[RMDB]
RNA sequence: GGGAACGACUCGAGUAGAGUCGAAAAACACCAAAAUUGAAAACGGAAGGCAAUCCUUCCACGACGAUACUUACUUUCCUUUGAUCGUCGUUACUACUGGCAUAGCCACAAAGGAGAACAAACAUGAGCGCGGACACUGACUUCGGUCAGUGUCCAAGACGAAUGGAGUGUUCGCACUCCAUUCGUCAAAAGAAACAACAACAACAAC
Reactivity to 2A3 in 0.01 (KOAc 150mM, MgCl2 10mM, bicine 150mM(pH8.5), 24C), signal-to-noise 3, nucleotides 027 to 156: a000c060a100c010c030a030a040a020a130u160u250g080a060a080a050a000c030g000g000a000a000g020g000c130a050a220u260c010c000u000u020c000c000a000c010g000a000c000g000a000u070a160c060u120u030a010c020u050u100u070c020c000u060u010u030g010a010u020c000g000u000c000g000u020u070a040c060u020a010c020u000g000g000c050a260u130a130g050c020c000a020c040a010a010a010g070g010a000g040a050a040c100a090a050a010c050a110u220g100a070g180c120g020c080g030g000a000c000a010c000u000g000a000c000u020u030c120g040g000u000c000a010g000u000g020u000c000c000a000a000